Conditions: 150 mM KOAc, 10 mM MgCl2 and 150 mM bicine (pH 8.5), 24 C. The record gives the reactivity of an RNA of 177 nucleotides to DMS.

RNA sequence: GGGAACGACUCGAGUAGAGUCGAAAAGAUAUGGAUCCCAGGGAGCGUUCACGUCGGAAACGACGUGACGCGACGAUCUGGUGUCCUAAGUCAAAGAAGGAGAGUGACUUCGGUCACUCUCCUUCAAGAACGUUAGGUAGUUCGCUACCUAACGUUCAAAAGAAACAACAACAACAAC
Reactivity to DMS in 0.01 (KOAc 150mM, MgCl2 10mM, bicine 150mM(pH8.5), 24C), signal-to-noise 3, nucleotides 027 to 126: g000a020u000a040u010g000g010a010u000c300c010c000a010g000g030g000a030g040c010g010u010u010c010a010c010g020u010c000g010g010a010a000a010c000g010a000c000g020u000g000a000c030g020c000g000a140c170g000a100u000c010u000g000g020u000g010u000c000c010u000a000a070g000u000c000a150a120a130g000a020a000g010g010a030g010a020g010u000g000a020c000u010u020c180g030g000u000c000a010c000u000c000u010c020c000u000u000c000a020a090
Reactivities are rounded to 0.1 and cut off at 0 and 3.